[RMDB]
RNA sequence: GGGAACGACUCGAGUAGAGUCGAAAAGAAACAUCGACAUGGAUGGAAACAUGAAAGCUAGCGAAACAAAAGUCGGUGCGACGAGCUGGUACCGACGAAAACAGCUCGAACGCUAGCGAAAAGAAAAGGGUAAGUCUAUCUUCGGAUAGACUUACCCAAAAGAAACAACAACAACAAC
Reactivity to DMS in 0.01 (KOAc 150mM, MgCl2 10mM, bicine 150mM(pH8.5), 24C), signal-to-noise 1, nucleotides 027 to 126: g020a080a160a050c000a060u000c000g050a150c000a090u010g010g040a070u020g000g000a200a280a140c030a020u020g000a150a010a210g000c000u000a000g030c040g000a100a070a180c100a060a080a240a000g000u000c010g000g000u000g000c160g010a040c000g000a120g030c000u000g000g010u140a000c000c020g000a120c080g000a040a000a040a160c070a000g020c050u000c090g000a120a170c020g020c070u000a000g000c000g000a000a030a100a150g000a130a090a150a200
This 177-nucleotide RNA was probed chemically with DMS. The DMS profile rests on 934 reads.